[RMDB]
This 207-nucleotide RNA was probed chemically with DMS and 2A3. Conditions: 150 mM KOAc, 10 mM MgCl2 and 150 mM bicine (pH 8.5), 24 C. High 2A3 reactivity points to a flexible backbone, as in loops and unpaired stretches. The data come from the RNA Mapping Database (RMDB), library OK3TST. DMS adducts were read by reverse transcription with MarathonRT.
RNA sequence: GGGAACGACUCGAGUAGAGUCGAAAAAUGGGAGGAUCAGCAUCUGGUACAAUAAAUAGCUUUACUUCUAUAUCUAUGUUUUUAGAUUUUAGCAUAGCUAUAGAUCUUAAAAAGUUUCUCAUGAUAAACGAAGAUCGUUGCCAGCAACUAAUCAAUAGUCAUAUAGUCAGUUCGCUGACUAUAUGACAAAAGAAACAACAACAACAAC
Reactivity to DMS in 0.01 (KOAc 150mM, MgCl2 10mM, bicine 150mM(pH8.5), 24C), signal-to-noise 1, nucleotides 027 to 156: a100u010g010g040g010a100g020g030a030u010c010a050g000c030a180u000c040u010g000g050u000a060c090a080a160u000a080a060a150u000a040g000c020u000u010u010a030c010u000u010c030u010a060u000a040u000c010u000a010u000g000u000u000u000u050u000a140g050a250u020u040u000u010a110g000c020a010u000a010g000c040u000a010u020a030g000a010u000c000u000u020a000a050a050a050a070g010u000u000u010c060u000c050a140u010g010a210u010a070a080a100c130g020a090a040g000a060u010c040g020u010u010g040c040c060a210g000c100a060a090c040u000a040a130u000c030a040a150u000a190
Reactivity to 2A3 in 0.01 (KOAc 150mM, MgCl2 10mM, bicine 150mM(pH8.5), 24C), signal-to-noise 2, nucleotides 027 to 156: a000u060g020g000g000a000g050g000a080u020c010a010g010c020a020u070c020u030g030g030u020a020c040a030a100u150a110a050a020u060a040g000c000u010u010u040a060c000u050u040c000u000a020u000a000u020c000u000a000u000g030u000u030u000u130u150a080g020a210u140u140u030u100a010g030c000a000u000a000g010c000u010a000u010a020g020a000u000c000u090u140a160a110a010a010a020g010u030u150u010c070u040c030a060u080g020a060u090a090a080a010c050g010a050a030g010a080u080c010g020u030u030g040c020c000a000g030c040a040a080c040u120a060a060u070c030a010a090u050a090